[RMDB]
RNA sequence: GGGAACGACUCGAGUAGAGUCGAAAAAUGGAAUGUUUUUCAACCAUAAAAAAGAUCAAAUUCCUAUUAUUUGAAGCAACAUGGAUGGACCUAGUGGUCAUUAUGUCAGGUGAAAUAAGCCAGUCACAGAAAGACAAAUAUGACAUGUUCUCACUCACCUCACUAAAUCCUUCGGGAUUUAGUGAGGAAAAGAAACAACAACAACAAC
Reactivity to 2A3 in 0.01 (KOAc 150mM, MgCl2 10mM, bicine 150mM(pH8.5), 24C), signal-to-noise 2, nucleotides 027 to 156: a000u020g030g040a100a100u170g060u000u070u070u040u060c070a080a040c000c050a000u150a030a070a010a000a000a000g060a080u140c050a000a080a060u020u050c000c010u070a110u200u110a180u030u280u070g080a070a010g010c060a020a020c030a060u030g020g030a060u030g030g000a010c020c010u060a050g090u040g150g000u040c000a010u090u080a030u060g040u020c000a010g070g010u030g050a020a070a030u120a090a000g000c000c000a020g020u020c010a010c000a050g220a060a150a000g040a000c000a030a090a040u200a040u050g030a010c000a090u030g030u000u020c010u000c000a030c020u080c040a080